This 177-nucleotide RNA was probed chemically with DMS and 2A3. It was measured as part of the RMDB library RFMREP.

RNA sequence: GGGAACGACUCGAGUAGAGUCGAAAAAGAAGAGCUAGAGCAAUGGUUACGGAAUGGUAGCAAUACCAUAUCGUGAUCUCUAAUGAGCGUCCUCAUACUGUCCAAGGUGUUCAACCAUUUUACAAUGCCUAUUUUACUUCUUCGGAAGUAAAAUAGGAAAAGAAACAACAACAACAAC
Reactivity to DMS in 0.01 (KOAc 150mM, MgCl2 10mM, bicine 150mM(pH8.5), 24C), signal-to-noise 6, nucleotides 027 to 126: a090g010a070a080g010a090g010c040u000a050g000a100g020c260a100a090u010g000g000u000u000a010c010g000g000a050a010u000g000g010u000a000g010c300a080a120u000a010c000c000a010u000a020u000c010g010u000g010a010u000c010u000c120u010a090a090u010g000a040g010c140g010u010c040c020u000c030a070u000a100c110u000g000u000c040c040a070a070g000g000u000g010u000u010c120a060a100c070c050a110u010u000u010u010a070c170a080a090u010g010
Reactivity to 2A3 in 0.01 (KOAc 150mM, MgCl2 10mM, bicine 150mM(pH8.5), 24C), signal-to-noise 7, nucleotides 027 to 126: a000g080a030a010g030a000g030c040u080a020g020a010g120c060a080a160u210g030g010u010u020a010c000g020g010a030a020u010g000g010u010a010g010c030a020a030u010a020c000c000a000u000a040u010c010g000u010g020a020u010c030u000c030u080a080a110u140g050a020g030c040g090u060c010c010u010c010a060u080a130c030u060g050u040c020c020a040a080g050g000u040g040u060u070c030a040a040c020c010a080u090u090u050u050a090c090a100a080u160g050
The reactions ran in a buffer of 150 mM KOAc, 10 mM MgCl2 and 150 mM bicine (pH 8.5), at 24 C. For DMS the reverse transcriptase was MarathonRT.